[RMDB]
RNA sequence: GGGAACGACUCGAGUAGAGUCGAAAAGAUAUGGAUGUUGAGUUAUUGUCAGCGAAAUCGGAAACGAUGUUCGCUUGGAUUUAUAAUGUAAGCAUCCUAAGUCAAAAGUGUUAGUUCGCUAACACAACCCUAGUAAUAGGUUCGCCUAUUACUAGGGAAAAGAAACAACAACAACAAC
Reactivity to DMS in 0.01 (KOAc 150mM, MgCl2 10mM, bicine 150mM(pH8.5), 24C), signal-to-noise 8, nucleotides 027 to 126: g000a030u010a300u000g000g000a000u000g010u000u000g010a280g010u000u000a000u000u010g000u000c010a010g010c010g000a010a070a010u000c000g000g000a160a100a200c010g000a010u000g020u010u000c000g010c010u000u010g010g010a010u000u010u000a000u010a010a010u000g000u010a240a100g000c000a000u000c000c000u010a070a150g010u000c040a070a080a110a130g000u000g000u000u000a010g000u010u010c280g020c000u000a000a000c010a000c010a100a150
Reactivity to 2A3 in 0.01 (KOAc 150mM, MgCl2 10mM, bicine 150mM(pH8.5), 24C), signal-to-noise 8, nucleotides 027 to 126: g030a020u070a040u160g000g000a020u010g010u070u050g120a160g080u030u010a020u040u040g040u040c010a000g000c000g000a010a000a020u000c010g000g030a050a040a040c010g010a020u060g300u230u020c000g000c000u000u060g030g000a010u030u300u030a060u020a020a020u070g100u140a030a000g000c000a000u000c000c000u010a100a010g050u030c040a030a040a050a130g000u010g010u010u010a020g000u030u060c300g000c190u000a010a000c010a000c010a020a080